RNA sequence: GGGAACGACUCGAGUAGAGUCGAAAAGUUUACGCUCCAAGAUCGGUGGAUAGCAGCCUUAUCAAUAUCUAGGAGAACUGUGCUAUGUUUAGAAGAUUAGGUAGUCUCUAAACAGAACAAUUUACCUCAUACGUUAGGACGUUCGCGUCCUAACGAACCGUCAGGUAGGCUUCGGCCUACCUGACGGAAAAGAAACAACAACAACAAC
Reactivity to 2A3 in 0.01 (KOAc 150mM, MgCl2 10mM, bicine 150mM(pH8.5), 24C), signal-to-noise 1, nucleotides 027 to 156: g020u000u080u110a030c060g010c000u060c000c010a030a000g030a060u090c050g040g000u000g060g050a050u040a160g000c050a010g050c000c070u030u120a040u110c050a020a050u020a030u120c050u040a070g020g000a040g010a080a050c030u090g010u030g090c040u060a020u160g010u000u010u000a030g000a180a000g000a040u020u030a030g040g000u050a000g010u000c000u020c010u000a000a010a010c010a040g020a070a010c120a060a000u000u010u080a040c020c020u090c070a070u070a100c030g000u000u000a000g000g000a000c000g030u010u000c170g070c020g030u000c000c000u000a000a000c000g010a000a000

Structure probing data (2A3) for a 207-nucleotide construct. Reactivities are given for positions 27 through 156. The RNA was probed in 150 mM KOAc, 10 mM MgCl2 and 150 mM bicine (pH 8.5) at 24 C.